[RMDB]
RNA sequence: GGGAACGACUCGAGUAGAGUCGAAAAAGUCAACAGGUCACUGAAUGCUGAUGUCCACUUCCACCUUGUAAAGAUCCAUCUGUCUGGCCACCUGUCAGUCCGUCCAUCUAGUGCCAUUACCAAGCACCGUAGCCAAUAAGUUCGCUUAUUGGCUACGAAAAGAAACAACAACAACAAC
Reactivity to 2A3 in 0.01 (KOAc 150mM, MgCl2 10mM, bicine 150mM(pH8.5), 24C), signal-to-noise 2, nucleotides 027 to 126: a000g070u050c020a030a030c010a080g050g030u060c050a010c100u060g100a110a050u160g020c050u050g010a050u080g030u070c040c020a030c010u010u020c020c010a070c050c030u000u030g060u100a080a090a050g060a050u070c040c010a060u020c040u050g050u040c010u020g040g030c020c020a020c020c000u010g040u080c010a020g000u030c020c020g020u040c010c020a070u040c040u050a000g000u000g060c020c010a050u070u000a040c020c040a050a010g080c060a020c010
Reactivity to DMS in 0.01 (KOAc 150mM, MgCl2 10mM, bicine 150mM(pH8.5), 24C), signal-to-noise 4, nucleotides 027 to 126: a090g010u000c080a080a080c090a070g020g010u010c070a100c070u000g000a110a100u000g040c030u000g010a080u000g010u000c030c030a070c080u000u000c010c050a080c070c050u000u010g010u000a070a100a100g000a050u010c050c040a060u000c040u000g010u000c050u000g000g000c040c060a060c030c020u000g010u010c070a080g000u000c040c020g020u000c020c030a050u000c080u000a080g020u000g000c000c020a030u010u000a100c050c050a110a110g010c050a040c070
The record gives the reactivity of an RNA of 177 nucleotides to 2A3 and DMS. The RNA was probed in 150 mM KOAc, 10 mM MgCl2 and 150 mM bicine (pH 8.5) at 24 C. For 2A3 the reverse transcriptase was SuperScript II with manganese. For DMS, 3,898 sequencing reads were counted. The 2A3 profile rests on 2,713 reads. Source: RMDB library OK2TST, as collected in RNAgym. In probing experiments dimethyl sulfate is read out at A N1 and C N3, which are open when not base-paired.